[RMDB]
RNA sequence: GGGAACGACUCGAGUAGAGUCGAAAAACGCAAACCUGUGAGUGGACACCCGCUUUAUUCACUGGGGACGACAACUCUGGGGAGAAAAGGGAGGAUCGGAUGGGAAGAGUAUAUCCUACGGGAAUCCGUGUGAUUACUAGUUCGCUAGUAAUCACACAAAAGAAACAACAACAACAAC
Reactivity to DMS in 0.01 (KOAc 150mM, MgCl2 10mM, bicine 150mM(pH8.5), 24C), signal-to-noise 2, nucleotides 027 to 126: a020c060g000c130a080a160a110c030c030u030g020u000g010a010g050u010g020g030a080c100a210c090c070c140g050c120u000u000u010a060u010u000c040a070c060u000g000g030g000g000a070c080g020a090c140a070a080c050u000c020u010g000g010g010g000a090g010a060a040a030a020g020g000g000a100g000g010a100u010c130g010g000a090u000g000g010g000a050a050g000a030g000u000a070u000a080u000c030c010u030a090c040g020g010g000a150a060u010c080c060
Reactivity to 2A3 in 0.01 (KOAc 150mM, MgCl2 10mM, bicine 150mM(pH8.5), 24C), signal-to-noise 2, nucleotides 027 to 126: a000c050g000c030a050a020a050c020c000u050g000u050g060a020g010u090g020g050a030c030a050c060c070c000g020c020u070u150u110a100u080u100c050a010c110u080g000g000g030g010a030c040g020a030c010a050a080c010u000c040u040g030g000g030g060a060g020a000a120a030a020g030g000g020a050g030g000a050u030c040g030g050a060u050g000g010g010a030a000g020a030g130u010a000u000a010u050c000c020u020a040c040g030g000g050a060a040u050c060c050